[RMDB]
RNA sequence: GGGAACGACUCGAGUAGAGUCGAAAAGGAUAAAACUAGAUUUUGUAACUCGUUUUUAGUUUUACUAUUAAUACUGAUUAAUUAGUUUUUUGACCCAACGAUUACUACGAACCAAGAUGUUGAUACUUAUCACUUGGUUUGAGCUUCAUAAGUAUCUGAGAGCAAAUUAGUUCGCUAAUUUGCUCUCAAAAGAAACAACAACAACAAC
Reactivity to 2A3 in 0.01 (KOAc 150mM, MgCl2 10mM, bicine 150mM(pH8.5), 24C), signal-to-noise 1, nucleotides 027 to 156: g070g020a170u100a050a010a000a000c010u020a030g020a100u240u300u250u300g000u000a020a010c100u000c020g000u000u080u000u070u010a000g000u000u000u010u000a010c000u010a000u050u020a000a070u080a300c060u100g050a000u030u000a010a010u070u070a000g010u000u000u000u000u000u070g040a070c000c050c000a000a000c010g000a000u000u000a000c010u000a040c000g000a000a000c000c000a000a000g140a180u060g010u050u050g000a000u010a000c000u040u070a060u300c000a000c000u000u000g000g000u020u000u000g000a020g030c000u120u180c140a150u060a030a000g000u000a010u030c000u000
Structure probing data (2A3) for a 207-nucleotide construct. The reactions ran in a buffer of 150 mM KOAc, 10 mM MgCl2 and 150 mM bicine (pH 8.5), at 24 C. The data come from the RNA Mapping Database (RMDB), library RSTRND. For 2A3 the reverse transcriptase was SuperScript II with manganese.